[RMDB]
RNA sequence: GGGAACGACUCGAGUAGAGUCGAAAAGAUAUGGACACAGCUUUUGACGGCUGGGUACUCGGAAACGAGUACAUAGCCGAUAAGCUGUCGUCCUAAGUCAAAAGCUCAGUAGUUCGCUACUGAGCAAGCGAUUAUCUAUGUUCGCAUAGAUAAUCGCAAAAGAAACAACAACAACAAC
Reactivity to 2A3 in 0.01 (KOAc 150mM, MgCl2 10mM, bicine 150mM(pH8.5), 24C), signal-to-noise 3, nucleotides 027 to 126: g020a020u120a020u160g010g000a020c010a010c000a000g000c020u120u130u200u300g300a250c080g000g000c000u020g060g030g000u010a010c010u000c010g000g000a050a070a060c010g010a000g010u000a000c000a010u000a000g000c000c010g080a060u020a030a000g000c000u000g000u010c000g000u000c000c010u000a090a010g050u030c050a020a050a130a100g010c010u010c000a010g000u020a000g030u030u090c300g040c150u010a000c000u000g000a010g000c010a000a000
Reactivity to DMS in 0.01 (KOAc 150mM, MgCl2 10mM, bicine 150mM(pH8.5), 24C), signal-to-noise 3, nucleotides 027 to 126: g020a020u010a300u000g000g000a000c000a020c000a010g010c000u000u000u000u010g030a180c090g010g010c010u000g000g000g010u000a000c010u000c000g000g000a120a080a170c000g000a020g010u010a000c000a050u000a010g010c010c000g010a060u000a010a020g000c010u000g000u000c170g010u010c000c000u000a010a080g000u020c020a110a070a100a150g020c010u000c000a000g010u000a000g010u000u030c230g030c000u000a000c010u000g010a010g010c010a010a010